RNA sequence: GGGAACGACUCGAGUAGAGUCGAAAACAGCUUGGGAGGCGGCUCUCCCCAGGCGGCGUCCGCGGAGACACCCAUCCGUGAACCCCAGGUCCCGGGCCGCCGGCUCGCCGCGCACCAGGGGCCGGCGAGUUGGUAUUCUGUUCGCAGAAUACCAACUAAAAGAAACAACAACAACAAC
Reactivity to 2A3 in 0.01 (KOAc 150mM, MgCl2 10mM, bicine 150mM(pH8.5), 24C), signal-to-noise 3, nucleotides 027 to 126: c020a010g020c010u030u040g010g020g010a040g030g030c030g020g000c020u030c020u010c020c000c000c000a020g030g000c030g020g000c040g030u020c020c000g000c010g030g010a090g030a040c050a120c030c020c000a040u010c000c010g010u020g050a070a050c000c020c010c030a020g020g060u020c000c020c000g020g030g010c020c010g000c000c010g000g000c010u020c030g060c000c020g020c020g010c030a070c040c050a070g070g000g000g000c000c000g000g000c010g000
Reactivity to DMS in 0.01 (KOAc 150mM, MgCl2 10mM, bicine 150mM(pH8.5), 24C), signal-to-noise 5, nucleotides 027 to 126: c070a140g010c040u010u020g000g020g010a090g000g020c050g010g000c030u010c070u010c080c010c000c020a030g010g000c010g010g000c250g010u000c060c020g030c030g000g000a060g000a150c130a100c090c100c040a140u000c010c010g010u000g010a110a080c020c040c020c070a150g010g000u010c000c020c020g000g000g020c150c010g000c030c010g000g000c010u000c040g000c040c020g010c090g010c080a080c100c100a120g000g010g000g010c000c000g020g010c030g000